An RNA of 207 nucleotides, treated with 2A3 and read out base by base. Conditions: 150 mM KOAc, 10 mM MgCl2 and 150 mM bicine (pH 8.5), 24 C. For 2A3, 1,193 sequencing reads were counted. The data come from the RNA Mapping Database (RMDB), library M2RFPK.
RNA sequence: GGGAACGACUCGAGUAGAGUCGAAAAACAUAUAACGAUAUGAUUCAGAUGGUGUCUUACUGGUUCGUACCAAGGGACAUAAUGGUUUCUUGUUUCCAACCAAAGAACAAGUGGCGAGCCUGAAUAAAAAACUGACUGCCGUUCGCGGCAGUCAGAAGAGAUGUUUUACGUUCGCGUAAAACAUCUCAAAAGAAACAACAACAACAAC
Reactivity to 2A3 in 0.01 (KOAc 150mM, MgCl2 10mM, bicine 150mM(pH8.5), 24C), signal-to-noise 2, nucleotides 027 to 156: a000c040a020u240a010u070a150a120c040g040a030u040a070u210g080a060u070u130c050a050g060a190u060g060g040u050g020u020c030u040u100a100c070u080g020g010u030u050c040g070u090a030c010c010a040a030g000g060g000a010c020a010u200a100a090u110g080g000u000u020u010c000u000u030g000u000u000u020c020c020a040a040c020c010a060a090a000g000a050a020c010a030a020g030u020g050g050c070g020a010g020c010c020u040g050a050a030u130a090a100a010a000a020a030c000u000g000a000c000u000g000c020c000g020u040u060c190g000c000g070g020c000a000g000u000c000a000g000a030a000